[RMDB]
Annotation:
An RNA of 177 nucleotides, treated with 2A3 and DMS and read out base by base. It was measured as part of the RMDB library OK2TST.

RNA sequence: GGGAACGACUCGAGUAGAGUCGAAAAUCGCCUGCAAGACAAAGCCGUCGACGCGGUCCUCGAGCCGAUAAGGUUCGUGCGUUGUCGGCUGGACGGCGCCGGUUUCGAGGCGAAGCGGUGAGGUCGGGCCGUCCAGCGGAUUCGUCCGCUGGACGGCAAAAGAAACAACAACAACAAC
Reactivity to 2A3 in 0.01 (KOAc 150mM, MgCl2 10mM, bicine 150mM(pH8.5), 24C), signal-to-noise 1, nucleotides 027 to 126: u010c010g100c000c010u020g060c140a130a000g050a070c040a040a190a000g000c010c000g070u070c030g020a040c010g000c020g100g010u060c000c040u090c040g000a010g000c010c010g070a220u050a280a090g000g000u030u040c020g050u070g030c030g060u000u070g020u030c000g000g040c000u000g010g000a000c030g050g000c010g000c030c010g030g010u070u140u030c100g080a060g000g130c070g060a040a010g060c040g070g010u040g040a040g030g030u110c010g000g040
Reactivity to DMS in 0.01 (KOAc 150mM, MgCl2 10mM, bicine 150mM(pH8.5), 24C), signal-to-noise 2, nucleotides 027 to 126: u000c120g010c020c000u000g050c140a160a140g030a040c150a170a090a090g000c000c000g010u000c020g000a080c030g010c000g000g000u020c100c100u000c060g000a000g010c020c000g000a130u000a140a170g000g000u000u010c060g010u000g010c000g020u010u000g010u000c020g030g000c020u000g000g010a060c110g000g000c040g000c010c020g000g010u000u010u000c070g000a120g000g020c010g020a110a100g020c050g000g000u010g000a060g010g000u000c040g010g010
High 2A3 reactivity points to a flexible backbone, as in loops and unpaired stretches. Values cover nucleotides 27 to 126.